[RMDB]
RNA sequence: GGGAACGACUCGAGUAGAGUCGAAAAUAGUAGUUUGAUGUAUCGAGAGAUGAAGAACGAGGAGCAGGAUACAAGUAUGAUAAAAGGAAUCACAGACAUUCCGUAAGGAUAAUAACCCAUGGAGGGCGAAGAUAUCGUCCUUAUCCUCGGAAGGCAAGUUAGAGGAGAUAGUGUUGCUGGAAAUAGCAAGGCGUCGUGAAAUGCACAGCAGCUCGUCUGUAGUUCCUUAGUAUGCGGGGCGAAUAGGAUAAAACGCAUACCUACAAAGAAUGCUGUUCGCAGCAUUCAAAAGAAACAACAACAACAAC
Reactivity to DMS in 0.01 (KOAc 150mM, MgCl2 10mM, bicine 150mM(pH8.5), 24C), signal-to-noise 3, nucleotides 027 to 266: u010a120g010u000a080g020u000u000u000g000a050u010g010u000a020u000c030g000a060g000a110g000a030u000g010a040a110g000a090a050c070g000a040g010g000a110g020c060a020g010g000a060u010a070c220a040a120g010u000a030u010g000a170u000a070a110a050a010g010g000a040a020u000c040a030c040a020g010a040c040a230u000u010c000c000g000u010a070a050g000g000a020u000a060a080u010a110a120c070c050c030a060u020g010g010a040g000g010g000c010g000a030a180g000a110u020a060u000c010g010u000c000c010u000u010a030u000c010c000u000c010g010g000a080a050g010g000c060a030a090g020u000u000a060g010a060g000g010a120g000a060u020a050g020u010g000u000u000g020c010u010g000g010a060a070a100u020a080g020c040a020a080g000g000c030g020u000c070g000u000g000a040a070a090u010g000c060a070c030a040g010c020a050g010c040u000c160g000u000c000u000g000u000a080g020u000u000c000c000u000u000a060g020u000a010u000g000c030g010g020g020g000c070g000a040a090u000a060g010g010a120u020a060a030a060a070c030g000c030a010u000a010c020c140u000a070c110a050a070a110
An RNA of 307 nucleotides, treated with DMS and read out base by base. The RNA was probed in 150 mM KOAc, 10 mM MgCl2 and 150 mM bicine (pH 8.5) at 24 C. Source: RMDB library POS240, as collected in RNAgym. Values cover nucleotides 27 to 266. Reactivities are rounded to 0.1 and cut off at 0 and 3.